[RMDB]
RNA sequence: GGGAACGACUCGAGUAGAGUCGAAAAACUCUUGGGAGUCAGGGGCCAUUUGGAGGUGUGCACCCAGACGUGUGGAGUGUGUCUGGAGUGAGGAGGAGGCUGGACAAGGGCACCUGCGUCUGUCCUGUCUAGCGAAGUACUUCGGUACUUCGCUAGAAAAAGAAACAACAACAACAAC
Reactivity to DMS in 0.01 (KOAc 150mM, MgCl2 10mM, bicine 150mM(pH8.5), 24C), signal-to-noise 1, nucleotides 027 to 126: a060c030u010c020u010u000g000g020g000a120g010u010c060a130g020g010g020g010c040c070a090u000u000u020g010g010a120g000g020u010g010u020g030c030a060c030c010c010a070g000a030c020g060u000g010u020g050g000a130g030u010g020u010g000u010c000u020g000g000a120g020u000g030a080g030g000a090g000g010a110g000g000c040u010g000g010a070c040a020a060g000g000g000c020a050c120c080u020g010c140g000u000c080u010g000u000c000c020u010g010
Reactivity to 2A3 in 0.01 (KOAc 150mM, MgCl2 10mM, bicine 150mM(pH8.5), 24C), signal-to-noise 1, nucleotides 027 to 126: a030c080u080c030u050u080g080g040g020a100g030u030c040a070g000g020g000g010c040c000a060u140u090u060g140g000a120g020g020u070g040u100g090c010a020c030c000c000a000g000a000c050g060u080g060u170g150g120a120g070u140g020u010g000u020c010u010g000g020a120g050u070g010a050g040g030a050g000g000a020g000g000c070u030g010g000a050c040a060a050g030g030g020c000a040c000c080u090g030c030g100u100c020u030g000u030c000c010u010g050